[RMDB]
RNA sequence: GGGAACGACUCGAGUAGAGUCGAAAACAGCGCAAGAGGUUGCUGAUUUCACUUCAGGAGGUGAGCAUGUCACCGAGUUUGCGACAGCUUUGGCAACGGAUAAGCCUGUGACAAUUACAGAUGUGUCGAGCCGUGCGAUGUUCGCAUCGCACGGCUCAAAAGAAACAACAACAACAAC
Reactivity to 2A3 in 0.01 (KOAc 150mM, MgCl2 10mM, bicine 150mM(pH8.5), 24C), signal-to-noise 1, nucleotides 027 to 126: c060a000g100c110g010c080a040a000g040a100g020g050u070u110g040c080u030g070a000u070u000u300c040a000c010u170u000c060a030g290g070a040g170g000u080g000a000g040c080a050u100g110u150c000a000c000c000g000a030g000u000u120u000g080c030g060a030c060a000g000c070u000u000u020g040g000c090a010a040c180g000g020a140u080a060a040g000c000c000u000g000u000g000a010c040a000a150u180u180a060c040a000g230a300u150g080u120g080u120c000
The record gives the reactivity of an RNA of 177 nucleotides to 2A3. Values cover nucleotides 27 to 126. The reactions ran in a buffer of 150 mM KOAc, 10 mM MgCl2 and 150 mM bicine (pH 8.5), at 24 C. Source: RMDB library OK1LIB, as collected in RNAgym.